Source information: The record gives the reactivity of an RNA of 177 nucleotides to DMS and 2A3. High DMS reactivity at an A or C suggests that its Watson-Crick edge is free. Conditions: 150 mM KOAc, 10 mM MgCl2 and 150 mM bicine (pH 8.5), 24 C. Values cover nucleotides 27 to 126. It was measured as part of the RMDB libraries RFM100 and RFMREP.
[RMDB]
RNA sequence: GGGAACGACUCGAGUAGAGUCGAAAAUUUUCGUACCAGUGCGUUCCUCCAAACCACCACGCUCACGUUGAUGCGAAGUUGGUCUGAAGGAGUUCAUUGGUACACAAAUCAUAAGAGCAUGGAGGACUCUUCUGCGUAAAUUCGUUUACGCAGAAGAAAAAGAAACAACAACAACAAC
Reactivity to DMS in 0.01 (KOAc 150mM, MgCl2 10mM, bicine 150mM(pH8.5), 24C), signal-to-noise 4, nucleotides 027 to 126: u000u000u020u010c130g020u000a020c000c000a010g000u000g000c080g000u000u010c010c000u030c020c020a000a040a020c020c000a010c030c080a190c000g000c000u000c030a180c300g010u040u030g000a030u020g010c000g020a110a110g020u010u010g020g010u000c030u000g020a030a010g010g020a030g000u000u000c000a010u000u000g000g010u000a010c010a030c210a010a070a040u010c140a120u020a080a090g000a030g010c050a040u000g000g000a080g010g000a090c140
Reactivity to 2A3 in 0.01 (KOAc 150mM, MgCl2 10mM, bicine 150mM(pH8.5), 24C), signal-to-noise 9, nucleotides 027 to 126: u050u050u020u080c070g000u000a000c000c000a000g000u010g010c020g020u020u000c010c000u000c000c000a010a000a020c000c000a010c020c010a060c030g000c000u040c020a160c190g190u150u290g040a050u160g000c000g020a060a020g050u090u030g000g000u000c000u010g010a010a000g000g000a010g000u000u010c000a000u000u000g000g000u000a000c000a000c000a000a070a010u150c090a040u090a220a070g040a010g070c060a060u120g050g030a040g040g040a070c030